[RMDB]
RNA sequence: GGGAACGACUCGAGUAGAGUCGAAAAGAUAUGGACUUGCUACCCACCGAACUACUGGCGUAUUCGGAAACGAAUACGACCAGCGAGGCAAGUCCUAAGUCAAAAGAGUCAGGUUCGCCUGACUCAACGAAGUGCACAGGUUCGCCUGUGCACUUCGAAAAGAAACAACAACAACAAC
Reactivity to DMS in 0.01 (KOAc 150mM, MgCl2 10mM, bicine 150mM(pH8.5), 24C), signal-to-noise 1, nucleotides 027 to 126: g000a130u000a050u010g000g000a010c000u000u000g110c000u000a060c080c030c190a300c260c070g070a110a060c060u000a290c000u000g000g000c060g060u000a000u000u000c000g040g000a060a080a080c000g010a000a020u000a010c000g000a120c000c000a000g000c110g000a300g000g000c010a040a000g000u000c000c000u000a010a060g030u000c160a080a090a130a180g000a010g030u000c000a020g000g000u000u000c230g000c020c000u000g030a000c000u010c020a010a060
Structure probing data (DMS) for a 177-nucleotide construct. The data come from the RNA Mapping Database (RMDB), library TTRDEL. Reactivities are given for positions 27 through 126. DMS adducts were read by reverse transcription with MarathonRT.